[RMDB]
Record summary:
An RNA of 177 nucleotides, treated with 2A3 and DMS and read out base by base. 2A3 adducts were read by reverse transcription with SuperScript II with manganese. The DMS profile rests on 4,187 reads. Conditions: 150 mM KOAc, 10 mM MgCl2 and 150 mM bicine (pH 8.5), 24 C. Reactivities are given for positions 27 through 126.

RNA sequence: GGGAACGACUCGAGUAGAGUCGAAAAUUAAACGGUGAAUCAACUGAAGAAUUCGAAUAUGUUGAUCGUGGAACUGUUUGUUCUUUAGGUUCACAUGACGGUGUAGGUAUGGUAUUUGGUAAACCUACGAUGUCUAUCGGUUCGCCGAUAGACAUCGAAAAGAAACAACAACAACAAC
Reactivity to 2A3 in 0.01 (KOAc 150mM, MgCl2 10mM, bicine 150mM(pH8.5), 24C), signal-to-noise 3, nucleotides 027 to 126: u130u060a150a060a000c090g030g020u080g060a000a010u040c040a040a060c000u050g110a040a000g030a040a100u260u050c070g100a070a010u110a090u160g040u030u030g100a190u120c180g030u130g100g000a030a030c000u050g000u100u040u220g070u040u000c000u020u080u040a090g040g000u030u010c020a010c010a090u050g100a050c050g050g090u170g040u110a050g000g010u040a030u140g040g090u110a190u190u100u180g120g030u170a080a060a170c000c000u000a010
Reactivity to DMS in 0.01 (KOAc 150mM, MgCl2 10mM, bicine 150mM(pH8.5), 24C), signal-to-noise 3, nucleotides 027 to 126: u010u040a030a090a130c100g000g030u020g000a060a000u020c060a080a160c080u000g000a060a060g000a060a090u010u020c130g010a040a060u010a010u030g010u010u000g010a110u020c120g000u000g030g000a040a010c000u000g000u030u000u000g050u000u020c020u000u000u000a070g000g020u020u000c010a060c050a060u010g000a110c110g020g000u040g020u000a050g000g010u020a070u020g000g000u010a090u020u010u010g000g000u030a020a060a040c030c000u000a020